This 177-nucleotide RNA was probed chemically with 2A3 and DMS. The 2A3 profile rests on 5,342 reads. 2A3 adducts were read by reverse transcription with SuperScript II with manganese. The DMS profile rests on 3,710 reads. It was measured as part of the RMDB library RFMREP.
[RMDB]
RNA sequence: GGGAACGACUCGAGUAGAGUCGAAAAGAAGUCACUCGCAUACGUGUGUGUGCAUUUCUUGCUAUUGCUGCUUAGCUUCUCUAAAACACUGGGCUACGUUUUUCAACGCUCGAGAGGCAGAGUCUCACCUAGUUAGUGAGUUCGCUCACUAACUAGGAAAAGAAACAACAACAACAAC
Reactivity to 2A3 in 0.01 (KOAc 150mM, MgCl2 10mM, bicine 150mM(pH8.5), 24C), signal-to-noise 3, nucleotides 027 to 126: g010a000a000g010u040c000a000c020u020c000g000c010a010u040a120c280g060u010g000u000g000u000g000u000g030c040a020u000u020u030c010u010u010g000c010u030a040u090u160g050c040u010g010c000u030u040a010g000c000u020u020c010u000c010u070a080a100a110a030c070a050c060u040g000g000g000c000u060a040c080g070u020u030u020u100u230c060a080a020c040g030c020u010c040g070a050g010a010g070g000c010a010g000a020g080u000c040u000c030a050
Reactivity to DMS in 0.01 (KOAc 150mM, MgCl2 10mM, bicine 150mM(pH8.5), 24C), signal-to-noise 4, nucleotides 027 to 126: g010a010a020g010u000c000a020c010u000c020g010c010a040u000a070c270g050u010g030u010g000u010g010u000g010c170a010u000u000u000c000u000u000g010c040u000a060u010u010g020c050u000g010c040u000u000a050g010c020u000u000c020u010c010u020a070a050a070a100c150a090c120u010g000g000g000c020u000a100c250g010u000u000u000u000u000c130a040a140c160g000c030u000c050g000a030g010a070g000g010c060a080g010a130g000u000c030u010c070a300